[RMDB]
RNA sequence: GGGAACGACUCGAGUAGAGUCGAAAACGAUUCGGGGAUUGAUCGCUACGUACGGGCAUUCGCAACCCGACGGGCUGAAACGCAUGCUUGACAGCCGUCUGAAGCACUGACGCGCCGCGCAGUCAAACCGCUGAGUCUCCUUCGGGAGACUCAGCGGAAAAGAAACAACAACAACAAC
Reactivity to 2A3 in 0.01 (KOAc 150mM, MgCl2 10mM, bicine 150mM(pH8.5), 24C), signal-to-noise 1, nucleotides 027 to 126: c000g000a020u080u070c000g000g000g000g000a090u000u230g030a010u030c040g000c060u090a080c060g030u110a050c060g000g000g000c020a010u020u230c170g080c170a130a130c000c000c000g000a000c010g000g060g040c000u100g010a200a000a000c080g000c050a030u060g000c040u000u080g090a070c020a030g050c080c000g000u050c000u000g030a080a000g020c000a060c020u000g030a000c030g050c040g010c010c020g050c050g020c020a000g060u000c040a050a000a020
The record gives the reactivity of an RNA of 177 nucleotides to 2A3. For 2A3 the reverse transcriptase was SuperScript II with manganese. Conditions: 150 mM KOAc, 10 mM MgCl2 and 150 mM bicine (pH 8.5), 24 C.